Overview:
Conditions: 150 mM KOAc, 10 mM MgCl2 and 150 mM bicine (pH 8.5), 24 C. Structure probing data (2A3 and DMS) for a 177-nucleotide construct. Reactivities are given for positions 27 through 126. For 2A3, 1,027 sequencing reads were counted. 2A3 adducts were read by reverse transcription with SuperScript II with manganese.
[RMDB]
RNA sequence: GGGAACGACUCGAGUAGAGUCGAAAAUUAAAGUCCCAACAUCUAAUGGCAUCUAAUAAUGACAAAAUGGGUACAUGUAAAUGUCAUAAAAUAUAGACACAAUAUAAGUGAAAGAUGCCAAAAAAAAGAUACUUCAAGUAUUCGUACUUGAAGUAUCAAAAGAAACAACAACAACAAC
Reactivity to 2A3 in 0.01 (KOAc 150mM, MgCl2 10mM, bicine 150mM(pH8.5), 24C), signal-to-noise 1, nucleotides 027 to 126: u090u020a070a050a020g110u010c000c000c000a010a050c010a060u050c030u070a210a060u100g000g000c000a000u050c030u010a120a050u090a050a020u120g030a010c020a060a130a090a070u070g020g000g150u180a040c050a030u050g010u090a080a100a080u040g000u010c000a000u090a010a090a000a000u200a000u050a060g110a040c030a010c000a000a070u130a030u080a300a050g000u000g010a130a090a000g000a020u000g010c000c000a000a000a000a000a020a000a000a000
Reactivity to DMS in 0.01 (KOAc 150mM, MgCl2 10mM, bicine 150mM(pH8.5), 24C), signal-to-noise 1, nucleotides 027 to 126: u000u020a070a150a080g000u000c000c000c000a210a110c300a070u010c070u000a050a130u000g010g040c040a050u010c000u010a130a120u000a040a070u010g040a080c000a010a010a130a070u000g050g000g000u000a100c070a030u030g000u010a010a050a090u000g010u000c010a070u000a050a050a100a120u000a080u000a070g030a160c010a020c040a060a050u010a110u000a050a080g000u010g000a120a050a060g010a030u000g000c030c000a000a000a000a060a040a080a070a080